[RMDB]
RNA sequence: GGGAACGACUCGAGUAGAGUCGAAAACACGCACGCCAACGCAUAGAUAUCUGCGCGAUAGGUGACCUCAUCGCCGGUGAACCGCUCCGGGGCCAUGUAGUUGUAGGUUCCCACGGCGGUCCCGGUCCGUCAGGGAAACAUUCGUGUUUCCCUGACGAAAAGAAACAACAACAACAAC
Reactivity to 2A3 in 0.01 (KOAc 150mM, MgCl2 10mM, bicine 150mM(pH8.5), 24C), signal-to-noise 2, nucleotides 027 to 126: c040a000c060g050c010a080c080g030c010c000a040a030c030g000c000a010u050a100g140a090u210a130u110c060u000g020c020g010c050g060a030u090a100g050g000u010g070a070c000c020u100c060a150u160c080g000c000c000g000g020u060g030a180a020c010c010g000c010u000c040c050g000g060g000g050c030c010a090u280g100u210a150g150u110u240g130u150a080g050g000u140u300c000c000c010a010c080g000g000c000g000g000u010c000c000c000g000g000u000c010
Reactivity to DMS in 0.01 (KOAc 150mM, MgCl2 10mM, bicine 150mM(pH8.5), 24C), signal-to-noise 2, nucleotides 027 to 126: c070a080c180g010c120a100c020g000c040c140a080a060c010g000c030a030u000a170g010a180u000a110u000c070u000g000c020g020c080g030a040u030a100g020g020u000g030a140c060c080u050c050a080u020c070g010c020c000g070g010u000g000a120a020c000c010g030c010u010c300c240g000g020g000g000c020c020a070u030g010u000a140g010u000u020g000u030a100g010g000u000u000c000c000c000a090c240g000g010c010g020g000u000c020c000c000g010g020u000c140
Overview:
This 177-nucleotide RNA was probed chemically with 2A3 and DMS. It was measured as part of the RMDB library OK2TRN. For 2A3 the reverse transcriptase was SuperScript II with manganese. The reactions ran in a buffer of 150 mM KOAc, 10 mM MgCl2 and 150 mM bicine (pH 8.5), at 24 C. Reactivities are given for positions 27 through 126. The 2A3 profile rests on 1,893 reads.